Notes:
The data come from the RNA Mapping Database (RMDB), library M2PK50. Structure probing data (DMS) for a 177-nucleotide construct. For DMS, 669 sequencing reads were counted.

[RMDB]
RNA sequence: GGGAACGACUCGAGUAGAGUCGAAAAUCAAUCAUGUUCGCAUGAUUGAAAAGGUCAGGUGACCAAACCACGACAGGCGUCGAAGCGACCGAGCCCGGAGGCAAAGUGCAAUCUUCGGAUUGCACAAGUCCACAUGACGGUUCGCCGUCAUGUGGACAAAAGAAACAACAACAACAAC
Reactivity to DMS in 0.01 (KOAc 150mM, MgCl2 10mM, bicine 150mM(pH8.5), 24C), signal-to-noise 1, nucleotides 027 to 126: u000c000a010a010u000c000a010u000g000u000u010c090g020c010a010u000g000a030u010u000g000a030a050a070a110g000g000u000c050a100g080g030u010g010a160c100c050a020a110a120c060c040a160c030g010a080c100a160g000g030c100g040u000c050g000a180a100g050c060g030a040c020c000g000a070g060c010c030c080g040g020a040g020g010c140a010a080a130g010u000g010c000a000a040u000c010u000u050c210g010g000a010u000u000g050c000a010c000a030a100

High DMS reactivity at an A or C suggests that its Watson-Crick edge is free. The RNA was probed in 150 mM KOAc, 10 mM MgCl2 and 150 mM bicine (pH 8.5) at 24 C.